[RMDB]
RNA sequence: GGGAACGACUCGAGUAGAGUCGAAAAUAAGUCUGCCCGUAAGUCGAAGCAGACAACAGGGAAACAGGUUAAUAUUCCUGUGCCAGUGUGCACUCAAAGCUGACGCUUUGGGGCCGCCUCUGCUGGGAUAACACGUGUGUUUCGACACACGUGUUAUAAAAGAAACAACAACAACAAC
Reactivity to DMS in 0.01 (KOAc 150mM, MgCl2 10mM, bicine 150mM(pH8.5), 24C), signal-to-noise 5, nucleotides 027 to 126: u030a100a120g010u010c020u010g010c010c030c000g000u060a130a120g010u050c050g010a140a190g000c010a010g010a020c040a080a080c140a120g010g010g020a080a100a020c040a020g000g010u000u010a090a140u020a180u020u020c010c000u000g010u000g020c060c020a070g020u020g000u020g010c010a090c000u000c000a010a000a010g000c010u010g040a160c280g000c010u000u000u000g000g000g000g000c040c050g000c050c050u000c050u020g000c000u000g010g010g010
Reactivity to 2A3 in 0.01 (KOAc 150mM, MgCl2 10mM, bicine 150mM(pH8.5), 24C), signal-to-noise 6, nucleotides 027 to 126: u130a040a020g010u000c010u020g020c030c010c010g030u070a090a080g100u110c030g020a080a030g010c030a000g060a000c030a010a040c030a040g070g030g000a110a120a020c000a000g050g010u060u100a120a040u080a130u140u120c000c000u020g020u030g050c020c020a040g000u050g060u120g070c040a090c250u010c000a020a010a000g010c040u180g120a070c200g000c000u020u000u000g000g000g000g000c020c030g000c010c010u040c020u040g020c010u040g010g000g060